[RMDB]
RNA sequence: GGGAACGACUCGAGUAGAGUCGAAAAAUGCCUUGGUGGGGUCGAUGCCAGUUGUAGUGGUGUAGCCAGGAUUUCAUGGCAUCGGCUCGGUGUUGGGAGUUCUGGUAGGUGUGAGCGUAAGCCCACACAUCCAUCCCGGUUUCGACCGGGAUGGAUGAAAAGAAACAACAACAACAAC
Reactivity to DMS in 0.01 (KOAc 150mM, MgCl2 10mM, bicine 150mM(pH8.5), 24C), signal-to-noise 1, nucleotides 027 to 126: a040u020g020c010c020u000u010g020g020u000g030g000g000g020u000c010g010a030u010g000c000c010a050g010u010u000g020u010a090g020u010g010g020u010g020u010a110g020c000c000a040g020g010a090u000u000u000c040a120u000g010g010c010a020u000c000g000g010c010u000c040g010g010u010g010u000u000g020g000g010a140g020u000u000c060u000g010g020u000a080g000g000u000g010u000g000a060g000c010g000u010a100a110g010c000c000c000a030c080a040
This 177-nucleotide RNA was probed chemically with DMS. For DMS, 4,317 sequencing reads were counted. The RNA was probed in 150 mM KOAc, 10 mM MgCl2 and 150 mM bicine (pH 8.5) at 24 C. Reactivities are rounded to 0.1 and cut off at 0 and 3.